[RMDB]
RNA sequence: GGGAACGACUCGAGUAGAGUCGAAAAUGAAAUCGUUCCGGUCCCCGGUCAGAGCACGAACAAGCCCCUCGCACCUCGUGCCGAGGGAAAUACCACCCUCCUAAGUAUCGUUGCAGACACUGGCGAUAUCGUAGGAUGGGUUCGCCCAUCCUACGAUAAAAGAAACAACAACAACAAC
Reactivity to DMS in 0.01 (KOAc 150mM, MgCl2 10mM, bicine 150mM(pH8.5), 24C), signal-to-noise 1, nucleotides 027 to 126: u110g040a070a150a270u000c030g000u000u050c090c000g000g000u000c000c000c000c050g250g000u000c030a100g040a090g000c000a070c030g000a000a040c020a110a160g000c170c040c000c030u000c040g010c030a000c000c170u000c140g000u000g000c210c090g080a130g000g000g000a000a010a060u020a060c110c000a000c040c060c000u000c000c080u000a020a040g000u000a000u020c040g000u010u020g000c000a110g000a270c230a080c070u000g050g010c000g040a100u000
Reactivity to 2A3 in 0.01 (KOAc 150mM, MgCl2 10mM, bicine 150mM(pH8.5), 24C), signal-to-noise 2, nucleotides 027 to 126: u100g000a000a040a080u060c050g000u040u030c020c000g000g040u050c030c000c000c000g000g000u000c000a000g000a000g140c050a000c010g050a060a020c120a130a000g040c000c020c000c000u000c000g010c010a020c060c120u120c050g010u090g030c100c040g030a000g020g040g010a000a150a000u050a000c050c020a050c000c000c000u070c020c000u010a100a050g040u080a070u100c010g040u020u120g110c030a000g000a040c030a010c130u050g000g000c000g050a030u000